[RMDB]
RNA sequence: GGGAACGACUCGAGUAGAGUCGAAAAAAAAGAUAUGGACCCACUUAGUACGACCUGUGGCAAUGAUGGAGCGUCGGAAACGACGCUCUUGAGCCACCUGUCGGAACAGUGGGUCCUAAGUCAAAAACUCUCAACUUAAGUUCGCUUAAGUUGAGAGAAAAGAAACAACAACAACAAC
Reactivity to DMS in 0.01 (KOAc 150mM, MgCl2 10mM, bicine 150mM(pH8.5), 24C), signal-to-noise 2, nucleotides 027 to 126: a050a080a070a070g010a080u010a300u010g000g020a000c000c000c000a010c010u000u000a160g000u000a160c010g000a000c000c040u010g010u010g000g030c000a250a090u020g000a090u000g000g010a010g040c010g010u000c020g010g000a080a070a220c030g000a000c010g010c000u000c000u000u010g000a090g020c010c000a000c000c050u000g020u010c010g000g000a100a100c240a070g000u000g000g000g000u000c000c000u000a000a070g020u010c020a060a100a090a120a100